[RMDB]
RNA sequence: GGGAACGACUCGAGUAGAGUCGAAAACGACUUGCUGCAUGUUUCAAUACCCAUCUGACUAAACACGCACUCCAAGGUUAAGAGUCCAUAUACCGCCUUGUGUCUUGUCUCCUCAUGGUGCCGAAGCGACCAUUAUCCUCUUCGGAGGAUAAUGGUCAAAAGAAACAACAACAACAAC
Reactivity to DMS in 0.01 (KOAc 150mM, MgCl2 10mM, bicine 150mM(pH8.5), 24C), signal-to-noise 1, nucleotides 027 to 126: c080g030a110c040u000u000g000c030u000g010c030a040u020g010u000u010u030c030a080a110u000a220c050c000c030a080u020c040u010g020a060c120u010a060a050a090c070a050c020g000c040a090c050u000c080c020a050a080g010g020u000u010a030a110g010a110g030u000c020c000a020u010a030u010a080c060c050g010c040c030u000u000g020u000g000u000c020u000u000g000u000c010u000c000c060u000c070a030u020g010g000u010g010c010c010g040a050a160g000c160
Reactivity to 2A3 in 0.01 (KOAc 150mM, MgCl2 10mM, bicine 150mM(pH8.5), 24C), signal-to-noise 2, nucleotides 027 to 126: c060g070a010c030u040u070g000c000u010g000c030a130u080g060u010u040u100c070a140a060u090a060c000c020c000a050u000c020u050g070a040c030u060a020a120a000c080a020c040g060c010a020c010u000c040c020a090a130g020g050u040u110a110a030g060a020g060u010c030c040a000u050a020u030a140c020c010g030c030c030u060u080g040u000g020u030c040u000u170g060u030c020u000c010c070u050c010a100u090g030g030u100g130c040c030g050a010a000g060c050